[RMDB]
RNA sequence: GGGAACGACUCGAGUAGAGUCGAAAAUCAUUCUGGAAGUACUUAUAUGAUAAUUCUCAUUUAGAGGUGAUCCAGAACUUUGCGAGAAUGGCUGGUGAUCCACCACUAAGUAGAGCCACAGAGGAUGUAAUGGACUAUCCUUCGGGAUAGUCCAUUAAAAAGAAACAACAACAACAAC
Reactivity to 2A3 in 0.01 (KOAc 150mM, MgCl2 10mM, bicine 150mM(pH8.5), 24C), signal-to-noise 3, nucleotides 027 to 126: u030c030a050u040u060c020u010g010g060a030a020g140u140a050c030u110u050a060u040a050u250g070a020u090a300a250u300u120c030u000c040a050u070u090u110a190g030a040g070g030u030g030a020u000c000c000a010g010a010a020c010u090u140u060g080c050g020a120g030a130a080u080g070g000c030u020g010g070u120g010a040u070c040c000a030c000c000a010c040u010a030a000g040u070a030g050a040g060c020c000a030c030a080g080a030g050g070a030u120g060
Reactivity to DMS in 0.01 (KOAc 150mM, MgCl2 10mM, bicine 150mM(pH8.5), 24C), signal-to-noise 3, nucleotides 027 to 126: u040c090a100u010u000c020u000g000g000a040a120g010u010a070c050u000u020a050u020a050u000g010a060u030a130a100u030u030c130u000c010a040u010u010u010a070g020a040g010g000u010g020a090u010c010c000a020g000a020a060c040u010u000u000g000c240g000a160g010a020a050u010g010g020c070u000g020g000u010g010a170u010c020c020a090c080c020a090c060u040a030a050g010u010a050g000a060g010c090c050a100c090a070g000a080g020g020a030u010g000

An RNA of 177 nucleotides, treated with 2A3 and DMS and read out base by base. It was measured as part of the RMDB library OK1LIB. For DMS, 4,529 sequencing reads were counted. The RNA was probed in 150 mM KOAc, 10 mM MgCl2 and 150 mM bicine (pH 8.5) at 24 C. The 2A3 profile rests on 1,456 reads.